[RMDB]
RNA sequence: GGGAACGACUCGAGUAGAGUCGAAAAACAACACGCUUCGGCGUGUUGUCGACGGAGGAAGCUGAGGACGCGCUUGUGCCGCAGCUGGGAAGCGCAGCGUAAAUCAGAGGUGAUUCGUCACCUCUAACCCAUGGGUUCAUUUCGAUGAACCCAUGGGAAAAGAAACAACAACAACAAC
Reactivity to 2A3 in 0.01 (KOAc 150mM, MgCl2 10mM, bicine 150mM(pH8.5), 24C), signal-to-noise 2, nucleotides 027 to 126: a000c000a000a000c000a000c000g020c020u040u080c200g100g000c020g000u010g000u010u010g010u010c010g030a010c030g030g030a040g050g040a160a010g010c040u000g040a040g060g060a060c050g030c020g010c080u110u100g050u120g060c040c020g030c030a020g060c020u080g000g010g000a050a000g010c020g000c060a020g010c040g070u160a040a050a040u140c060a020g000a000g000g030u010g010a020u030u090c090g030u000c100a000c000c000u010c010u010a030a030
Reactivity to DMS in 0.01 (KOAc 150mM, MgCl2 10mM, bicine 150mM(pH8.5), 24C), signal-to-noise 2, nucleotides 027 to 126: a000c000a010a000c010a010c010g010c000u000u020c210g040g000c010g030u000g000u000u000g010u000c050g000a090c090g000g000a090g000g010a070a070g000c050u010g010a100g050g010a160c110g010c050g020c070u010u000g010u010g030c040c030g020c030a090g000c050u000g000g010g030a190a060g020c080g010c040a040g000c040g000u010a040a070a100u020c140a000g010a030g000g050u000g000a070u000u000c120g010u000c000a030c000c000u010c010u000a020a120

An RNA of 177 nucleotides, treated with 2A3 and DMS and read out base by base.
Conditions: 150 mM KOAc, 10 mM MgCl2 and 150 mM bicine (pH 8.5), 24 C.
2A3 is a SHAPE reagent: it acylates the 2'-hydroxyl of flexible nucleotides of all four kinds.
DMS adducts were read by reverse transcription with MarathonRT.